[RMDB]
RNA sequence: GGGAACGACUCGAGUAGAGUCGAAAAUAUUACAUCAGGUACUGGUGUGUAAUUUAAACGACCAUCGGACAUGGGGGCUGCCCAACUCCUCUUCUGUCCCCGGUCAAGCUAUCAGUACUUGUGUUAUCAUUCGCAAUCCGUUCGCGGAUUGCGAAUGAAAAGAAACAACAACAACAAC
Reactivity to 2A3 in 0.01 (KOAc 150mM, MgCl2 10mM, bicine 150mM(pH8.5), 24C), signal-to-noise 1, nucleotides 027 to 126: u170a000u070u130a060c060a060u050c030a060g000g010u000a000c000u020g000g000u040g060u030g060u080a080a090u080u290u110a140a160a010c020g000a020c000c000a040u120c120g000g000a000c000a010u020g000g000g020g010g000c000u080g080c030c090c000a020a060c030u040c000c040u020c000u140u060c030u050g020u000c000c000c000c040g000g000u000c010a000a010g000c000u020a010u000c000a000g000u000a000c000u000u000g000u010g020u000u020a060u050